[RMDB]
RNA sequence: GGGAACGACUCGAGUAGAGUCGAAAAGGCUGUUCGUUCGCGAACAGCCAAAUUAAAUCAGCGGUAAGCUCCGCUAAAAUAUUACCGCUGAAGCGGAGCUUAAAAGUCCAGACUUCGGUCUGGACAAGACUUCUAUUACGUUCGCGUAAUAGAAGUCAAAAGAAACAACAACAACAAC
Reactivity to DMS in 0.01 (KOAc 150mM, MgCl2 10mM, bicine 150mM(pH8.5), 24C), signal-to-noise 2, nucleotides 027 to 126: g030g010c000u000g010u010u000c000g050u000u020c220g020c020g000a010a010c010a020g000c000c000a000a000a010u000u010a060a100a120u010c050a100g020c070g000g010u000a040a040g030c000u000c020c000g000c010u010a000a060a070a090u000a100u010u010a080c040c020g010c020u000g000a090a040g010c020g020g000a020g010c000u000u000a030a030a110a160g020u000c000c010a000g010a020c000u010u010c220g010g000u000c000u000g010g000a010c000a020a050
Reactivity to 2A3 in 0.01 (KOAc 150mM, MgCl2 10mM, bicine 150mM(pH8.5), 24C), signal-to-noise 3, nucleotides 027 to 126: g000g020c010u000g000u000u000c010g010u020u070c230g000c010g130a000a000c000a000g010c000c000a010a010a000u000u010a010a020a030u090c040a020g030c010g120g000u050a040a010g000c000u000c010c000g010c020u040a020a100a040a030u190a050u070u120a050c010c010g010c070u020g020a000a000g000c000g000g030a010g000c000u010u040a050a110a030a010g000u000c000c000a000g000a000c010u030u080c220g060g020u000c000u000g000g000a000c000a000a000
Chemical mapping of a 177-nucleotide RNA with DMS and 2A3. For DMS, 2,653 sequencing reads were counted. DMS adducts were read by reverse transcription with MarathonRT. Reactivities are rounded to 0.1 and cut off at 0 and 3.